[RMDB]
RNA sequence: GGGAACGACUCGAGUAGAGUCGAAAAGAUAUGGACAUCGUGGGAAUCGUUGAAAUUGACUCGGAAACGAGUCAAUGGAGAUUAACACGAGUGUCCUAAGUCAAAUCGUCCCGUUCGCGGGACGAAAGGUGUAUGAGCAGUUCGCUGCUCAUACACCAAAAGAAACAACAACAACAAC
Reactivity to DMS in 0.01 (KOAc 150mM, MgCl2 10mM, bicine 150mM(pH8.5), 24C), signal-to-noise 1, nucleotides 027 to 126: g020a050u010a300u010g030g020a000c020a110u010c000g010u000g000g000g010a000a000u000c000g020u000u050g010a090a110a020u010u010g040a010c000u010c000g010g000a070a130a190c000g010a010g000u000c000a000a000u000g000g000a100g010a010u000u000a020a020c010a020c000g000a030g010u000g000u010c000c010u000a020a100g010u000c040a050a110a170u000c000g000u000c000c000c000g040u000u010c280g070c000g000g000g020a020c000g000a000a030a080
Reactivity to 2A3 in 0.01 (KOAc 150mM, MgCl2 10mM, bicine 150mM(pH8.5), 24C), signal-to-noise 1, nucleotides 027 to 126: g040a050u050a020u160g000g010a010c000a010u010c000g010u020g000g040g080a060a050u020c050g150u230u070g010a020a010a000u010u000g000a000c010u000c010g000g020a080a040a050c020g010a010g000u010c000a010a000u000g010g010a030g010a020u000u040a000a000c000a000c000g070a000g090u040g010u030c000c000u000a100a030g070u030c020a010a030a180u060c010g000u000c000c040c010g020u030u070c300g010c050g010g000g000a000c000g000a040a020a030